The data come from the RNA Mapping Database (RMDB), library M2RFPK. The record gives the reactivity of an RNA of 207 nucleotides to DMS and 2A3. Values cover nucleotides 27 to 156. For 2A3 the reverse transcriptase was SuperScript II with manganese.
RNA sequence: GGGAACGACUCGAGUAGAGUCGAAAAGUACGUAGAGUGUCGGCAAGCUCUAUAUAUGGACACUUACGAAGGGUUUUGCUUGUUUUGUAUCUCAAGCCGACUUUGAGUAUUUGAGGAAAAUACGACAUGAAUCCUGUGACGUUCGCGUCACAGGAAACAAUGGUGCUGUGUUCGCACAGCACCAUUGAAAAGAAACAACAACAACAAC
Reactivity to DMS in 0.01 (KOAc 150mM, MgCl2 10mM, bicine 150mM(pH8.5), 24C), signal-to-noise 2, nucleotides 027 to 156: g040u010a020c040g060u010a000g000a020g000u000g020u000c040g020g040c060a110a300g000c020u010c000u000a030u010a050u010a100u000g000g000a150c050a040c050u000u000a180c070g000a080a120g000g030g010u000u000u010u010g010c020u000u010g010u000u000u000u000g000u000a090u000c060u000c040a040a130g030c030c000g010a060c080u000u000u070g010a290g010u000a030u000u000u000g010a180g010g030a000a030a020a040u000a060c030g030a220c060a120u000g000a120a170u000c010c000u010g000u000g000a030c000g020u000u000c300g010c060g000u000c000a020c000a000g030g000a010a000a040
Reactivity to 2A3 in 0.01 (KOAc 150mM, MgCl2 10mM, bicine 150mM(pH8.5), 24C), signal-to-noise 3, nucleotides 027 to 156: g050u050a030c030g000u020a010g020a010g080u030g030u030c020g040g050c060a090a070g020c010u040c030u060a050u000a020u010a030u170g140g020a030c040a010c090u090u080a020c080g110a060a070g050g000g040u040u020u060u070g010c000u010u030g010u060u070u040u050g060u070a130u070c020u000c040a000a010g000c010c000g030a060c060u030u090u080g080a070g000u020a030u060u050u050g040a080g000g120a000a040a020a010u060a060c030g050a000c030a040u190g110a070a070u000c010c000u000g000u000g000a000c000g020u050u020c220g030c000g070u000c000a000c000a000g000g000a000a000a000
The RNA was probed in 150 mM KOAc, 10 mM MgCl2 and 150 mM bicine (pH 8.5) at 24 C.